[RMDB]
RNA sequence: GGGAACGACUCGAGUAGAGUCGAAAAUAGGGAGGCGUGAGCGCGGAAGCAGCAUAUUGUGAAUGGCGGCGACGACAGCGUGCAGUGCUGCUGCCCGAAGGCCGCCAUCAGCGUUAAGGAUGACCAACUUUUACGUGACGUUCGCGUCACGUAAAAGAAAAGAAACAACAACAACAAC
Reactivity to DMS in 0.01 (KOAc 150mM, MgCl2 10mM, bicine 150mM(pH8.5), 24C), signal-to-noise 3, nucleotides 027 to 126: u010a120g000g000g010a090g000g000c080g010u000g010a060g030c080g020c080g020g010a120a060g040c050a060g020c050a090u000a100u000u000g000u020g010a120a060u010g000g000c000g020g010c040g000a260c200g010a050c040a020g000c050g000u010g010c070a130g000u010g030c040u000g010c010u000g000c010c010c040g020a090a150g010g000c020c000g000c010c000a010u000c040a120g010c050g020u000u000a050a080g000g020a130u010g000a120c060c080a100a180
Reactivity to 2A3 in 0.01 (KOAc 150mM, MgCl2 10mM, bicine 150mM(pH8.5), 24C), signal-to-noise 2, nucleotides 027 to 126: u170a040g030g050g000a060g030g030c060g060u020g030a070g000c040g030c030g050g010a000a010g040c000a000g020c060a030u180a100u130u210g080u030g120a150a060u020g000g010c000g000g000c030g030a070c040g080a020c020a010g060c020g010u050g000c040a030g120u050g130c040u060g000c000u010g000c000c030c040g000a030a020g160g000c000c000g020c000c000a020u000c010a000g020c010g040u040u040a100a020g100g010a080u100g030a060c040c010a000a100